Source information: The record gives the reactivity of an RNA of 207 nucleotides to DMS and 2A3. It was measured as part of the RMDB library OK3TST.
[RMDB]
RNA sequence: GGGAACGACUCGAGUAGAGUCGAAAAAGAUGUGGGCUGCUGUUUCAUGCAUGCACAGAGGCAGGCCCUGGCUCUUGCAGCAGCGGACUUCACGAAUGUGGAAUGUGGAGGUUACACAGCGAUGCCUAGACUGUCUGUCCUUAGACCGAAGGGCAGCAUAGAUGUAUUCAUUCGUGAAUACAUCUAUAAAAGAAACAACAACAACAAC
Reactivity to DMS in 0.01 (KOAc 150mM, MgCl2 10mM, bicine 150mM(pH8.5), 24C), signal-to-noise 4, nucleotides 027 to 156: a090g000a120u000g020u010g010g020g060c010u010g030c010u000g000u000u000u000c040a110u000g000c020a120u000g030c050a090c070a090g010a100g010g010c010a090g010g020c050c070c020u000g010g010c000u000c030u000u010g020c020a080g010c040a090g020c040g020g000a080c020u000u000c010a050c020g010a110a130u000g020u000g010g020a130a140u010g020u000g010g010a070g010g000u000u000a100c070a050c020a100g020c040g000a080u010g020c010c000u000a070g020a180c080u010g010u010c010u000g010u000c010c030u010u000a120g010a220c110c050g010a090a060g000g000g020c000a040g010c080
Reactivity to 2A3 in 0.01 (KOAc 150mM, MgCl2 10mM, bicine 150mM(pH8.5), 24C), signal-to-noise 7, nucleotides 027 to 156: a000g130a070u160g010u090g060g010g010c020u030g010c000u000g040u050u080u130c060a060u070g030c040a080u020g020c010a080c060a030g020a030g030g020c030a030g110g150c040c060c020u010g040g030c000u000c010u020u010g010c010a020g000c020a000g020c050g060g050a030c000u010u000c010a010c040g070a150a070u190g030u150g130g080a110a070u170g000u010g020g010a010g030g010u110u150a040c050a000c000a040g010c010g300a300u150g000c010c010u050a060g040a090c040u070g030u150c000u000g000u000c000c000u010u010a070g050a110c020c020g020a030a000g000g000g000c000a000g000c000
2A3 adducts were read by reverse transcription with SuperScript II with manganese. In probing experiments dimethyl sulfate is read out at A N1 and C N3, which are open when not base-paired.